[RMDB]
The record gives the reactivity of an RNA of 177 nucleotides to DMS and 2A3.
It was measured as part of the RMDB library RFM100.
For DMS, 1,301 sequencing reads were counted.
Conditions: 150 mM KOAc, 10 mM MgCl2 and 150 mM bicine (pH 8.5), 24 C.
RNA sequence: GGGAACGACUCGAGUAGAGUCGAAAACUCAACGCGCGCACCUCACCAGGCCCGGACGCGCGGAGGACCGACAGCCGGGCGCGCUUUCGCGAUCGCGCGGGCGGUGGUGCAUGGCCGCUCCCAGCCCCUGGCGCAACAAAUUCGUUUGUUGCGCCAGAAAAGAAACAACAACAACAAC
Reactivity to DMS in 0.01 (KOAc 150mM, MgCl2 10mM, bicine 150mM(pH8.5), 24C), signal-to-noise 1, nucleotides 027 to 126: c050u000c030a110a130c220g020c070g020c060g000c060a090c000c000u000c050a160c100c090a120g000g000c010c040c020g010g000a100c050g020c050g000c040g000g010a020g000g010a160c100c060g000a120c000a040g020c060c000g000g000g010c070g020c140g030c060u010u060u000c080g010c070g000a090u000c140g000c010g000c000g000g000g000c090g000g000u010g000g020u000g070c000a130u000g000g010c070c000g000c020u000c000c000c020a190g010c000c000c140
Reactivity to 2A3 in 0.01 (KOAc 150mM, MgCl2 10mM, bicine 150mM(pH8.5), 24C), signal-to-noise 2, nucleotides 027 to 126: c020u080c070a020a060c060g020c010g000c000g000c020a050c010c010u030c020a060c010c040a010g070g060c000c000c010g090g070a070c010g050c010g000c010g030g000a050g020g070a100c000c040g050a030c010a000g100c020c020g000g050g010c020g010c030g020c020u030u050u080c040g030c030g070a220u110c030g010c020g010c000g030g000g000c010g030g020u070g000g000u010g030c020a070u080g070g000c000c020g000c020u020c000c000c000a000g050c000c000c000